[RMDB]
RNA sequence: GGGAACGACUCGAGUAGAGUCGAAAAUGCUGAGCUUUCGAGCUCAGCAGAGGCAAGCAAGCAGCGCUACGAGACAAGACGAGCAUAAGAUCGAGCAUGCUACAAUACGGCACUUCGGUGCCGUAAAUACUAGGGUGUCAUUCGUGACACCCUAGUAAAAAGAAACAACAACAACAAC
Reactivity to 2A3 in 0.01 (KOAc 150mM, MgCl2 10mM, bicine 150mM(pH8.5), 24C), signal-to-noise 1, nucleotides 027 to 126: u030g040c000u000g000a000g000c000u000u130u300c270g080a020g020c000u020c000a000g000c000a000g010a010g030g020c040a000a060g020c030a050a000g000c020a020g000c030g010c100u180a130c070g020a000g040a050c000a070a040g080a040c060g040a020g080c040a050u080a170a080g030a080u050c000g000a010g040c020a010u020g000c000u030a020c030a040a050u040a030c000g010g050c000a000c010u020u040c210g040g000u000g000c020c000g010u000a000a010a000
Reactivity to DMS in 0.01 (KOAc 150mM, MgCl2 10mM, bicine 150mM(pH8.5), 24C), signal-to-noise 2, nucleotides 027 to 126: u010g000c000u000g000a010g010c020u010u010u020c160g020a040g010c000u020c000a000g000c010a010g000a070g020g000c100a070a070g000c120a090a050g000c030a060g000c080g010c010u020a080c090g000a080g000a140c110a130a090g000a120c140g000a050g020c060a110u000a080a130g030a090u010c050g000a080g030c050a030u000g010c080u010a100c200a060a130u000a030c000g010g010c000a010c000u000u020c160g000g030u000g000c000c000g010u000a000a000a090
An RNA of 177 nucleotides, treated with 2A3 and DMS and read out base by base.
For 2A3, 1,341 sequencing reads were counted.
The reactions ran in a buffer of 150 mM KOAc, 10 mM MgCl2 and 150 mM bicine (pH 8.5), at 24 C.
Reactivities are rounded to 0.1 and cut off at 0 and 3.